Chemical mapping of a 177-nucleotide RNA with DMS and 2A3.

RNA sequence: GGGAACGACUCGAGUAGAGUCGAAAAAAAAAAGAUAUGGAGUGAACUACUUCGAACGUACGCGUUGAAAGCGUUUCGGAAACGAAACGCUGGAGCGUACCAGUAGAAGCACUCCUAAGUCAAAAAACACUUAUAAGAAGUUCGCUUCUUAUAAGUGAAAAGAAACAACAACAACAAC
Reactivity to DMS in 0.01 (KOAc 150mM, MgCl2 10mM, bicine 150mM(pH8.5), 24C), signal-to-noise 3, nucleotides 027 to 126: a000a040a050a070a070a090g010a000u010a300u010g010g000a050g020u010g000a070a060c110u010a300c010u010u000c010g000a120a160c300g000u000a000c010g030c000g000u000u030g050a170a140a030g000c000g000u000u000u000c010g000g000a080a100a110c000g000a010a000a010c000g010c010u000g010g000a060g000c010g000u000a000c010c050a030g010u000a050g000a020a010g000c000a010c010u000c010c000u010a020a080g030u020c010a000a090a060a110a110a120
Reactivity to 2A3 in 0.01 (KOAc 150mM, MgCl2 10mM, bicine 150mM(pH8.5), 24C), signal-to-noise 2, nucleotides 027 to 126: a000a010a020a020a060a030g080a050u120a050u110g000g020a010g010u010g020a160a070c110u300a060c000u300u030c030g020a040a000c010g000u000a000c010g000c030g280u300u100g040a020a020a020g000c000g010u010u000u020c000g030g000a060a070a040c000g030a040a000a000c000g000c000u000g020g030a020g000c000g000u000a000c000c000a000g010u000a000g000a030a000g020c000a000c000u000c000c000u010a090a040g040u000c010a030a020a020a020a130a160
For DMS, 2,515 sequencing reads were counted. It was measured as part of the RMDB library TTRDES. The reactions ran in a buffer of 150 mM KOAc, 10 mM MgCl2 and 150 mM bicine (pH 8.5), at 24 C. DMS adducts were read by reverse transcription with MarathonRT.